[RMDB]
RNA sequence: GGGAACGACUCGAGUAGAGUCGAAAAACGAUCUGUGUUCGCACAGAUCGUAAAAAACCUUUGUGAUGCGACAUGAGUAAACCAUGGUCCCAUUGGGACCUGGUGCUCAACAGCGCAUCACUCUGGUAAAAAAUACCAAGUCUUCGGACUUGGUAAAGCGAAUGAUACUGUUCGCAGUAUCAUUCGCAAAAGAAACAACAACAACAAC
Reactivity to 2A3 in 0.01 (KOAc 150mM, MgCl2 10mM, bicine 150mM(pH8.5), 24C), signal-to-noise 3, nucleotides 027 to 156: a010c010g000a000u000c000u010g000u010g060u130u120c220g050c130a000c000a010g000a000u020c010g000u000a010a000a000a000a000a010c000c000u010u020u000g000u010g000a000u000g010c010g020a040c220a130u040g000a010g010u060a050a240a070c030c020a100u280g010g010u010c000c030c100a300u240u300g000g010g000a000c000c010u000g000g000u020g000c000u010c020a010a000c110a040g040c000g000c000a000u000c000a000c000u000c000u000g000g000u040a160a100a000a000a000a040u080a040c020c000a010a000g060u000c030u030u120c250g150g000a010c000u020u010g000g000u010a050a020a020

Structure probing data (2A3) for a 207-nucleotide construct. High 2A3 reactivity points to a flexible backbone, as in loops and unpaired stretches. Values cover nucleotides 27 to 156. The RNA was probed in 150 mM KOAc, 10 mM MgCl2 and 150 mM bicine (pH 8.5) at 24 C.